Structure probing data (2A3) for a 207-nucleotide construct. The reactions ran in a buffer of 150 mM KOAc, 10 mM MgCl2 and 150 mM bicine (pH 8.5), at 24 C. 2A3 adducts were read by reverse transcription with SuperScript II with manganese.
[RMDB]
RNA sequence: GGGAACGACUCGAGUAGAGUCGAAAAACAGAAAAAAGGAGUUUAAAUUAGAUUUGCAAACGGACGGUACUAAAUACCGUCAGUUUUACGUCUAACUUAUCGUUAACUCUGCAAAAAGAAAACAAGAAAAACAAGCGUGAGUUCGCUCACGCUUGAACUUUGCCUCAUACUUCGGUAUGAGGCAAAGAAAAGAAACAACAACAACAAC
Reactivity to 2A3 in 0.01 (KOAc 150mM, MgCl2 10mM, bicine 150mM(pH8.5), 24C), signal-to-noise 1, nucleotides 027 to 156: a010c020a010g080a010a140a000a000a020a000g010g000a020g020u020u020u020a060a050a110u020u000a020g010a030u020u050u230g130c030a000a000a000c000g030g000a000c000g000g000u030a050c030u290a140a060a060u050a020c000c000g000u000c000a000g000u000u000u010u100a000c000g020u000c000u000a000a080c020u110u090a030u200c020g120u060u020a010a010c020u010c000u020g020c050a000a150a070a070a020g090a040a080a040a000c160a090a020g150a140a140a050a000a000c000a000a000g030c020g000u000g020a010g020u030u160c240g050c100u000c000a000c000g000c020u020u000g000a000a000